[RMDB]
RNA sequence: GGGAACGACUCGAGUAGAGUCGAAAAUUAUUCAAAGUAGUUUGCUAGACAUUGAUUGUCAAUGGAAAAAAAGACAGUAUGGUGGACUCUCUCGUCCAUCCGUCCAGCAGCUCAUUGGCAAAUAUAAAGAGAGUAUGGAGUUCGCUCCAUACUCUCUAAAAGAAACAACAACAACAAC
Reactivity to DMS in 0.01 (KOAc 150mM, MgCl2 10mM, bicine 150mM(pH8.5), 24C), signal-to-noise 1, nucleotides 027 to 126: u030u000a000u030u000c070a110a060a040g020u010a000g000u000u000u000g020c000u010a020g010a040c070a150u000u010g000a140u000u000g000u000c000a020a100u000g000g000a010a000a030a140a080a090a090g000a000c000a020g040u000a040u010g010g030u000g000g010a010c020u000c270u070c280u000c170g000u000c000c030a000u000c000c130g050u000c040c030a040g000c240a070g000c000u000c020a120u000u020g030g000c270a000a010a060u000a070u000a010a060
Structure probing data (DMS) for a 177-nucleotide construct. Source: RMDB library OK2TRN, as collected in RNAgym. The DMS profile rests on 655 reads. The reactions ran in a buffer of 150 mM KOAc, 10 mM MgCl2 and 150 mM bicine (pH 8.5), at 24 C.